The record gives the reactivity of an RNA of 177 nucleotides to 2A3 and DMS. DMS adducts were read by reverse transcription with MarathonRT. Conditions: 150 mM KOAc, 10 mM MgCl2 and 150 mM bicine (pH 8.5), 24 C.

RNA sequence: GGGAACGACUCGAGUAGAGUCGAAAAUUAUUGGAAAUAGAUCGUUCUGUAAAAUUAGAAUAUUUCGUUAUUGCUAAGGAAAGGUUUAGUAGUCAACGAGAAACAUACAUUCUUAGACUGCCAAAGCAUACGCAUAGUGGUUCGCCACUAUGCGUAUAAAAGAAACAACAACAACAAC
Reactivity to 2A3 in 0.01 (KOAc 150mM, MgCl2 10mM, bicine 150mM(pH8.5), 24C), signal-to-noise 3, nucleotides 027 to 126: u080u040a070u030u080g040g020a030a020a070u120a030g120a140u120c070g040u130u000c020u000g140u190a020a170a120a170u210u160a010g080a130a030u080a100u070u150u050c020g060u050u010a000u050u070g010c010u050a000a040g080g090a230a100a060g150g100u130u040u090a010g000u000a030g050u010c090a000a040c090g000a020g020a000a080a000c010a000u200a010c000a110u000u000c010u000u080a030g010a130c050u050g000c050c000a130a090a000g070c020
Reactivity to DMS in 0.01 (KOAc 150mM, MgCl2 10mM, bicine 150mM(pH8.5), 24C), signal-to-noise 3, nucleotides 027 to 126: u040u030a040u000u000g000g000a080a030a040u000a040g010a080u000c120g030u000u000c000u050g010u020a060a080a120a210u040u020a030g000a020a040u010a050u010u020u020c020g010u010u000a050u010u000g030c020u000a030a060g020g000a120a130a160g000g010u010u000u000a010g050u000a000g000u000c050a030a040c190g000a010g010a060a040a130c180a140u040a120c300a080u010u000c010u000u010a170g020a000c000u000g000c040c030a050a030a170g010c140

Source: RMDB library OK1LIB, as collected in RNAgym.